[RMDB]
RNA sequence: GGGAACGACUCGAGUAGAGUCGAAAACUGGUCCGGUGACGGACCAGAAGCGAAUCGUUCGCGAUUCGCAGUCCAACACUUCGGUGUUGGACAACGUAAUCUUCGGAUUACGAACGCAUCGGUGACGAUGCGAGGAGUGCGUGAGCACUCCACAUUACGCUACGGCGUAAUGAGCACAAGCGUUCGCGCUUGUGCAAGAAGGCGUACGCGCCUUCAACGCUCAACUCAUGGAGCGCACGACGGAUCACCAUCGAUUCGACAUGAGUAGCCACAGAUUCGUCUGUGGCAAAAGAAACAACAACAACAAC
Reactivity to DMS in 0.01 (KOAc 150mM, MgCl2 10mM, bicine 150mM(pH8.5), 24C), signal-to-noise 7, nucleotides 027 to 266: c000u000g000g000u000c000c000g000g000u030g010a230c010g010g010a020c000c000a000g000a110a110g010c000g020a010a010u000c000g020u010u020c180g020c010g010a010u000u000c000g010c000a090g010u000c000c000a010a010c000a000c000u000u030c180g020g020u000g010u000u000g010g010a000c010a030a100c050g010u000a000a000u000c000u010u030c180g020g010a010u000u000a000c000g010a190a270c040g000c000a000u000c000g000g010u010g000a140c000g010a010u000g000c000g000a090g010g010a020g020u000g010c010g010u020g000a300g010c020a010c000u000c000c010a090c030a000u000u000a000c000g010c010u000a100c160g020g010c000g010u000a000a000u000g000a180g000c010a020c010a000a010g000c010g020u000u020c210g020c010g020c000u000u000g010u000g000c010a050a040g000a010a010g000g000c010g020u000a080c230g020c020g010c000c000u000u000c000a150a290c020g010c000u000c000a090a030c000u000c010a010u000g000g000a010g000c010g000c130a050c170g010a080c030g020g010a020u000c020a120c220c180a180u020c120g000a020u000u000c020g010a130c010a000u000g000a000g010u000a260
Reactivity to 2A3 in 0.01 (KOAc 150mM, MgCl2 10mM, bicine 150mM(pH8.5), 24C), signal-to-noise 9, nucleotides 027 to 266: c000u000g000g000u000c000c010g020g070u120g060a060c020g000g000a000c000c000a000g000a020a010g000c000g000a000a000u010c010g030u090u120c290g020c010g130a000u000u000c000g000c010a010g000u000c000c000a000a000c000a000c010u060u100c260g160g000u000g000u000u000g000g000a000c000a000a000c010g000u000a000a000u000c020u030u040c220g120g000a000u000u000a000c010g030a090a020c010g000c000a000u000c000g020g040u080g050a040c010g000a000u000g010c000g000a070g000g000a000g000u010g000c030g040u160g060a030g000c000a000c000u000c000c000a000c000a000u000u000a000c000g000c010u010a030c290g100g000c000g000u010a000a000u110g080a020g000c000a000c000a000a000g000c000g020u090u160c210g040c000g010c130u000u000g000u000g000c000a000a020g000a000a000g000g000c010g010u040a030c240g030c010g000c130c000u000u000c010a010a010c000g000c000u000c000a020a020c000u000c000a000u000g000g000a000g000c020g060c090a070c220g250a030c010g010g010a010u020c010a050c240c070a220u240c160g000a010u010u010c000g010a000c000a000u010g000a000g010u010a030
An RNA of 307 nucleotides, treated with DMS and 2A3 and read out base by base. The RNA was probed in 150 mM KOAc, 10 mM MgCl2 and 150 mM bicine (pH 8.5) at 24 C. The DMS profile rests on 47,480 reads. It was measured as part of the RMDB library POS240. For 2A3 the reverse transcriptase was SuperScript II with manganese.